[RMDB]
RNA sequence: GGGAACGACUCGAGUAGAGUCGAAAAAGAGACUUCGGUCUCUGUAUCAACCUUUGUGUUGGCGAGGAUCAUAUGAAGAAGAUGCACUCCCAUUGGGAGUGACCCAUUGUAAAGUAUGGGAGCCAACACUCUGGUCAUUGUUCGCUUUCGAGCGAAACGACAUGCAGGUAUUCGUACCUGCAUGUCGAAAAGAAACAACAACAACAAC
Reactivity to 2A3 in 0.01 (KOAc 150mM, MgCl2 10mM, bicine 150mM(pH8.5), 24C), signal-to-noise 3, nucleotides 027 to 156: a010g000a000g000a010c030u060u120c300g070g010u000c000u000c010u000g030u020a150u190c090a030a000c010c000u020u000u010g010u010g000u000u000g010g000c010g030a240g060g010a030u010c000a000u000a000u020g020a040a300g000a010a010g000a010u010g010c000a000c000u010c000c040c100a300u150u300g020g000g000a000g000u010g000a030c020c020c010a000u000u060g010u010a010a000a030g010u000a000u000g010g010g010a010g000c000c000a000a000c000a010c000u000c000u000g020g010u040c050a070u020u290g080u060u000c000g020c000u060u090u180c250g110a030g030c030g010a040a010a010
Reactivity to DMS in 0.01 (KOAc 150mM, MgCl2 10mM, bicine 150mM(pH8.5), 24C), signal-to-noise 2, nucleotides 027 to 156: a020g010a030g020a010c010u010u000c300g040g000u000c000u000c010u010g010u000a120u010c040a040a170c000c010u000u000u020g030u000g000u000u000g020g000c010g000a110g020g000a050u000c000a050u000a070u000g010a080a200g020a110a300g000a060u010g010c000a000c000u000c000c010c020a300u000u000g030g000g010a090g020u000g000a000c090c050c040a060u000u000g000u010a170a130a300g010u000a000u010g020g010g010a140g030c010c020a010a020c000a020c020u000c010u010g060g020u000c040a100u000u000g000u010u000c010g030c000u000u010u020c150g030a030g020c000g010a020a020a170
Chemical mapping of a 207-nucleotide RNA with 2A3 and DMS. It was measured as part of the RMDB library RNAMAK. For DMS the reverse transcriptase was MarathonRT. For 2A3 the reverse transcriptase was SuperScript II with manganese. The 2A3 profile rests on 2,223 reads.